[RMDB]
RNA sequence: GGGAACGACUCGAGUAGAGUCGAAAAUUUUAACCUGCAUUAGUUUUCACUGCAUAAGAUCCUCAUCAGAAACAUUAAGGAAAUUGACUUGGUAUUGUUAUGGGCAUAAUGAUCCAGACUCAAAACUCUGAAAUAGAACUCUGUACUUUGCUGCUCAUAUUGACGAAGGAUUCGUCCUUCGUCAAUAAAAAGAAACAACAACAACAAC
Reactivity to DMS in 0.01 (KOAc 150mM, MgCl2 10mM, bicine 150mM(pH8.5), 24C), signal-to-noise 1, nucleotides 027 to 156: u000u020u000u000a090a230c060c010u000g000c090a140u010u010a100g010u020u000u010u000c080a150c120u010g020c060a140u010a060a100g020a120u000c010c000u040c020a100u000c080a140g000a160a120a070c040a100u010u010a090a070g010g000a010a070a180u010u020g010a060c050u010u020g050g000u010a020u000u000g000u000u000a080u000g000g030g030c050a080u000a050a070u010g010a090u000c020c030a050g000a040c020u010c020a040a100a090a070c200u000c010u010g010a030a030a090u020a130g000a080a040c030u000c020u000g020u000a110c090u000u000u000g030c040u010g010c030u000c050a270
Reactivity to 2A3 in 0.01 (KOAc 150mM, MgCl2 10mM, bicine 150mM(pH8.5), 24C), signal-to-noise 1, nucleotides 027 to 156: u020u040u020u090a020a060c000c000u050g010c000a000u020u070a010g070u130u010u120u110c010a000c040u040g020c030a020u020a270a120g040a100u010c000c050u000c060a060u050c020a040g110a070a090a010c040a000u070u190a100a090g070g000a080a080a000u040u030g050a030c040u090u060g000g060u160a030u100u100g000u090u000a050u060g010g010g000c000a020u000a130a040u210g040a000u000c020c000a000g050a020c030u020c110a030a080a030a140c010u040c030u080g060a000a090a090u080a010g020a000a000c010u000c020u110g010u100a020c020u000u070u020g040c010u000g000c000u010c010a030